[RMDB]
Structure probing data (2A3) for a 207-nucleotide construct.
RNA sequence: GGGAACGACUCGAGUAGAGUCGAAAACAUUGUUCUGAUCAUCUGAAGAUCAGCUAUUAGAAGAGCAAGAUCAGUUAAGUCCUUUGGACCUGAUCAGCUUGAUACAAGAACUACUGAUUUCAACUUCAAAACGGGUGCUACUUCGGUAGCACCCGAACUGAUGUAAGCGGUUCGCCGCUUACAUCAGAAAAGAAACAACAACAACAAC
Reactivity to 2A3 in 0.01 (KOAc 150mM, MgCl2 10mM, bicine 150mM(pH8.5), 24C), signal-to-noise 1, nucleotides 027 to 156: c050a070u040u170g040u170u070c020u000g050a010u030c010a020u020c110u050g170a240a090g000a040u040c020a000g000c020u120a210u300u080a090g080a170a000g020a050g010c050a060a090g010a010u000c000a000g020u120u230a130a000g000u020c010c040u080u100u260g010g000a020c030c000u000g000a000u000c020a000g030c010u000u020g000a020u050a110c050a090a040g040a060a060c040u080a030c070u110g050a140u060u060u190c060a080a060c070u090u030c060a010a040a040a040c050g000g000g000u000g010c010u000a000c000u000u010c130g080g000u000a000g010c000a000c000c000c000g000a000a000
The reactions ran in a buffer of 150 mM KOAc, 10 mM MgCl2 and 150 mM bicine (pH 8.5), at 24 C.